[RMDB]
RNA sequence: GGGAACGACUCGAGUAGAGUCGAAAAGCGGCGAAGCAGAGACGGUGGGCCAGCGUCUCUGGACUGGCCCUUAUACGCAUGGCAGGUCCUGCUGCGUGAAAUAGCCGCGAAUGCCUUUUGGCUAAAAGGGAUAGUGCAUGUUCGCAUGCGCUAUCCCAAAAGAAACAACAACAACAAC
Reactivity to DMS in 0.01 (KOAc 150mM, MgCl2 10mM, bicine 150mM(pH8.5), 24C), signal-to-noise 4, nucleotides 027 to 126: g020c020g000g040c030g020a130a090g000c020a030g010a050g000a010c000g000g000u010g000g020g030c040c010a070g000c030g020u010c010u020c050u010g000g010a120c090u000g000g010c000c000c010u010u020a070u020a050c050g030c020a070u030g000g020c000a040g000g000u040c120c000u000g030c020u000g030c010g000u000g000a070a050a090u010a220g000c000c020g010c000g000a040a070u030g000c020c000u000u000u020u030g020g010c020u020a040a050a110a090
Reactivity to 2A3 in 0.01 (KOAc 150mM, MgCl2 10mM, bicine 150mM(pH8.5), 24C), signal-to-noise 4, nucleotides 027 to 126: g020c000g010g000c020g050a060a010g020c010a010g060a000g010a040c030g030g110u120g050g040g010c020c000a030g040c030g030u000c020u010c040u050g010g040a070c020u030g040g020c000c010c000u020u080a120u010a010c020g040c030a060u110g150g000c020a030g160g190u120c030c010u000g020c010u020g000c020g000u040g010a070a020a050u080a030g000c000c000g000c000g010a040a050u120g000c000c000u050u090u180u200g010g000c030u050a010a020a090a130